[RMDB]
RNA sequence: GGGAACGACUCGAGUAGAGUCGAAAACUAGGUUCCGCUUAUACUCGUGCUCACGGAUGCAGAUGCUCGAUCAACAGCGCGGGGGCAUGCAGUCGCAGCGCCAAUAUUCGGGUCAGUCGUGACUAGACCAUGCGGCUGGAUUCGUCUGGCUGUAUGGAAAAGAAACAACAACAACAAC
Reactivity to 2A3 in 0.01 (KOAc 150mM, MgCl2 10mM, bicine 150mM(pH8.5), 24C), signal-to-noise 9, nucleotides 027 to 126: c030u030a050g080g000u050u020c020c010g010c020u050u070a120u020a070c010u010c020g020u020g010c010u010c010a060c030g100g040a160u100g000c020a010g010a070u080g030c030u030c050g090a100u050c030a020a090c020a060g000c010g000c010g030g020g000g000g000c000a020u090g020c040a010g010u020c020g000c060a010g000c010g000c010c000a060a040u080a070u090u050c020g010g000g020u020c020a020g030u020c020g030u020g010a020c010u010a010g020a030
Reactivity to DMS in 0.01 (KOAc 150mM, MgCl2 10mM, bicine 150mM(pH8.5), 24C), signal-to-noise 9, nucleotides 027 to 126: c100u000a090g010g010u000u000c050c040g010c050u000u000a110u000a060c040u000c030g020u000g010c020u000c050a090c080g000g010a080u000g010c050a070g010a090u000g010c070u000c080g000a060u000c080a070a120c150a070g000c030g010c030g000g000g000g000g000c030a040u000g010c120a060g010u000c060g010c100a060g010c040g010c040c030a060a100u000a100u000u000c030g010g000g000u000c040a050g010u000c040g010u000g000a160c030u000a070g010a240